[RMDB]
RNA sequence: GGGAACGACUCGAGUAGAGUCGAAAAAGAUCAGCUCGUGUACGCACGAGCUGAUCAUUGGGUAAGUGCUUCCAUGCUUCAGUUUCCUUACUGGUAAGAUGGAUGUAGUAAUAGCACCUACCUUAAAGUUACCGCACACGUUCGCGUGUGCGGUAACAAAAGAAACAACAACAACAAC
Reactivity to 2A3 in 0.01 (KOAc 150mM, MgCl2 10mM, bicine 150mM(pH8.5), 24C), signal-to-noise 2, nucleotides 027 to 126: a000g000a000u000c000a010g050c000u010c060g000u000g000u010a010c300g050c070a040c000g000a030g020c000u000g010a000u000c000a000u000u000g000g120g000u000a000a010g000u000g040c010u110u030c000c000a040u180g070c000u030u060c000a000g020u000u060u080c030c000u070u090a050c020u000g000g110u160a070a000g010a000u020g010g000a040u210g210u190a160g040u110a030a230u160a170g000c000a010c000c020u000a040c000c000u030u120a020a100a000
The record gives the reactivity of an RNA of 177 nucleotides to 2A3.
2A3 is a SHAPE reagent: it acylates the 2'-hydroxyl of flexible nucleotides of all four kinds.